About this RNA
An RNA of 207 nucleotides, treated with 2A3 and read out base by base. It was measured as part of the RMDB library OK3TST.
RNA sequence: GGGAACGACUCGAGUAGAGUCGAAAAAUAUUGUGGUAGUGGUCUUAUUAAUAAGCCAGUGGGAUUAUUAAUACAAGGUCACAGGGUGGACUUCAGGAUGAUAAAGUAAGAAGACACCUAUUUAAGCAGCUGCUAAUCCUUAAGUGCUAUAACCUGAACCAUUUACUGCUUUCGAGCAGUAAAUGGUAAAAGAAACAACAACAACAAC
Reactivity to 2A3 in 0.01 (KOAc 150mM, MgCl2 10mM, bicine 150mM(pH8.5), 24C), signal-to-noise 2, nucleotides 027 to 156: a000u110a040u180u230g030u060g040g020u030a060g020u040g000g030u000c000u020u010a010u000u010a010a010u000a000a010g010c000c060a070g080u120g150g040g000a020u000u000a000u000u000a030a000u100a020c060a070a050g020g000u000c030a000c020a050g010g020g000u000g010g020a110c000u000u000c110a060g080g030a120u130g020a060u270a180a270a020g030u110a090a060g050a090a100g010a000c000a020c000c000u000a030u010u150u000a080a060g000c000a010g030c040u090g010c030u010a080a000u040c040c000u040u060a150a080g040u110g100c000u030a070u030a260a020c000c030u030g110a010